The record gives the reactivity of an RNA of 177 nucleotides to 2A3 and DMS. The 2A3 profile rests on 15,256 reads.

RNA sequence: GGGAACGACUCGAGUAGAGUCGAAAAGCCUAACAGUUCGCUGUUAGGCAAAUGCACAGACUUCGCAACUGUGAAAAACACAACAGAUGUGUCUAUGCGAGGAUCGUUGCGUCUUCGGACGCAACAAUAUAGUUUGAAUUUUCGAAUUCAAACUAUAAAAAGAAACAACAACAACAAC
Reactivity to 2A3 in 0.01 (KOAc 150mM, MgCl2 10mM, bicine 150mM(pH8.5), 24C), signal-to-noise 7, nucleotides 027 to 126: g000c000c000u000a000a000c000a000g050u090u120c160g060c110u000g000u000u000a000g000g000c000a020a030a010u100g000c000a000c000a020g040a030c010u050u010c060g000c030a080a110c080u030g010u050g130a150a030a010a030a000c060a010c040a110a070c050a120g170a260u070g070u010g020u060c050u090a060u050g000c010g020a010g030g050a110u150c090g000u000u000g000c000g000u000c000u020u030c200g090g000a000c000g000c000a000a000c000a000a000
Reactivity to DMS in 0.01 (KOAc 150mM, MgCl2 10mM, bicine 150mM(pH8.5), 24C), signal-to-noise 7, nucleotides 027 to 126: g010c000c000u000a010a000c010a010g010u000u010c240g020c000u000g010u000u000a000g010g010c010a000a020a030u000g010c020a020c020a020g000a060c030u010u010c090g010c030a100a110c030u000g000u010g000a050a060a070a110a080c110a050c080a090a100c170a090g000a120u010g020u000g000u000c060u010a060u000g010c010g010a070g000g000a100u010c120g000u000u000g010c000g000u000c000u000u010c170g010g010a010c000g010c000a000a000c000a060a090